[RMDB]
RNA sequence: GGGAACGACUCGAGUAGAGUCGAAAAGAUAUGGAAUUAGCAGGGAGCUGGCUCGGAAACGAGUCAGCGAAGAACUGUCAAUUCCUAAGUCAAAAUCACGUUUAACACUUCGGUGUUAAACGUGAAAGAAUAUUUCGAACUUCGGUUCGAAAUAUUCAAAAGAAACAACAACAACAAC
Reactivity to DMS in 0.01 (KOAc 150mM, MgCl2 10mM, bicine 150mM(pH8.5), 24C), signal-to-noise 2, nucleotides 027 to 126: g010a040u000a300u000g000g000a020a000u000u000a090g010c030a010g000g010g020a150g000c010u000g000g020c000u000c000g000g000a070a100a150c000g010a010g020u000c000a000g010c000g000a040a090g010a120a170c000u010g000u000c040a010a010u000u000c000c000u010a050a100g010u010c030a080a090a120a170u000c000a010c000g020u000u000u000a000a010c000a010c000u010u010c170g000g000u000g000u000u010a000a000a000c000g020u000g000a000a020a080